[RMDB]
RNA sequence: GGGAACGACUCGAGUAGAGUCGAAAAGCGAUAGCGUGGUCUCGGUUGCGCAGUCGCUUGCCAAUGCGUUGAAUGACUGUACGCGGCAGGUGCAGUCGCUGCGCAACGAUGCCGACCGGGAAAUUGAUCAUACGCGAGGUUUCGACCUCGCGUAUGAAAAAGAAACAACAACAACAAC
Reactivity to 2A3 in 0.01 (KOAc 150mM, MgCl2 10mM, bicine 150mM(pH8.5), 24C), signal-to-noise 1, nucleotides 027 to 126: g000c010g140a130u200a060g080c060g110u060g030g030u000c000u000c030g070g050u050u000g050c020g000c020a030g060u050c010g010c000u000u070g050c030c070a110a080u180g000c030g050u050u100g120a130a190u140g040a070c050u050g060u110a000c040g030c010g210g000c050a020g000g040u020g000c020a020g010u060c010g050c000u020g020c010g000c000a020a010c000g010a000u100g040c020c030g040a050c000c000g000g030g020a090a110a020u100u120g020a080
Reactivity to DMS in 0.01 (KOAc 150mM, MgCl2 10mM, bicine 150mM(pH8.5), 24C), signal-to-noise 2, nucleotides 027 to 126: g000c020g030a050u000a050g050c030g040u000g040g010u000c100u010c020g000g020u000u000g000c060g010c020a150g000u000c040g010c050u000u000g020c070c050a160a110u000g000c010g010u000u020g020a110a090u000g010a060c070u000g020u000a030c010g020c080g000g000c060a050g010g000u000g010c110a060g020u000c020g020c020u000g000c000g000c000a020a020c040g010a070u010g000c020c030g000a080c010c030g020g020g000a050a110a120u020u010g000a280